[RMDB]
RNA sequence: GGGAACGACUCGAGUAGAGUCGAAAAGAUAUGGAGUGAGUACUGGAGCUCGGUUCUCGGAAACGAGAACGGAGCGAUGAAAGUACCUGAAUCUCCUAAGUCAAACUUGUUAGUUCGCUAACAAGAAUCAAAUCACAAAGUUCGCUUUGUGAUUUGAAAAAGAAACAACAACAACAAC
Reactivity to DMS in 0.01 (KOAc 150mM, MgCl2 10mM, bicine 150mM(pH8.5), 24C), signal-to-noise 3, nucleotides 027 to 126: g000a030u000a010u000g000g010a020g020u000g020a160g020u000a000c000u000g000g000a020g020c000u000c000g010g020u000u000c000u000c000g020g000a010a000a020c000g010a010g010a000a000c010g010g010a000g030c000g000a030u000g010a140a190a020g000u000a010c010c070u010g010a110a110u020c000u000c000c000u000a000a110g000u000c010a130a070a220c010u000u000g010u000u000a010g000u000u010c300g020c010u000a010a010c010a010a000g010a140a120
Reactivity to 2A3 in 0.01 (KOAc 150mM, MgCl2 10mM, bicine 150mM(pH8.5), 24C), signal-to-noise 2, nucleotides 027 to 126: g000a000u020a010u060g000g000a030g040u200g050a110g040u010a000c000u010g030g000a020g010c020u020c120g160g000u000u010c000u000c000g010g000a010a000a000c010g010a010g010a010a000c040g040g000a010g000c020g030a030u000g000a010a000a000g030u010a000c000c000u070g130a170a270u160c000u000c010c000u000a010a010g000u020c020a010a070a140c000u000u000g010u030u000a040g020u050u050c300g000c130u010a010a000c010a010a000g000a020a120